Structure probing data (DMS and 2A3) for a 177-nucleotide construct. Reactivities are rounded to 0.1 and cut off at 0 and 3. For DMS the reverse transcriptase was MarathonRT. Values cover nucleotides 27 to 126. The data come from the RNA Mapping Database (RMDB), library OK1LIB. The DMS profile rests on 818 reads.

RNA sequence: GGGAACGACUCGAGUAGAGUCGAAAACUGCGCGAUGGGCGACCCGGAAAGGCCGGAAGCGGCCGGGCUGGAUCAGGAUGAGAGAUCAUCUUCAGACACCAACGAAAGUGAAAUAAAGUCAAAUGAACACGGACAAGAGGUUCGCCUCUUGUCCGUGAAAAGAAACAACAACAACAAC
Reactivity to DMS in 0.01 (KOAc 150mM, MgCl2 10mM, bicine 150mM(pH8.5), 24C), signal-to-noise 1, nucleotides 027 to 126: c070u000g000c030g080c060g030a130u040g000g000g040c050g000a040c110c000c050g070g000a090a190a080g000g000c040c010g030g030a270a120g000c010g000g000c040c000g050g000g070c000u000g000g100a110u000c130a080g000g000a000u010g000a000g000a280g000a090u000c030a000u000c000u000u000c080a290g030a090c030a070c030c040a080a050c000g040a090a060a010g010u050g000a110a000a030u090a050a090a000g000u000c120a120a160a230u030g000a110a230
Reactivity to 2A3 in 0.01 (KOAc 150mM, MgCl2 10mM, bicine 150mM(pH8.5), 24C), signal-to-noise 1, nucleotides 027 to 126: c070u080g020c000g020c030g060a090u130g000g090g000c060g010a040c000c000c000g010g020a240a200a000g020g000c000c000g120g040a070a110g160c030g000g000c000c000g030g000g000c000u000g000g000a020u200c020a030g010g000a000u030g010a000g020a000g000a030u030c000a000u000c000u020u060c010a030g000a070c020a020c060c020a050a040c000g080a100a050a050g030u120g110a140a020a000u280a070a060a070g140u000c130a030a030a240u170g020a040a000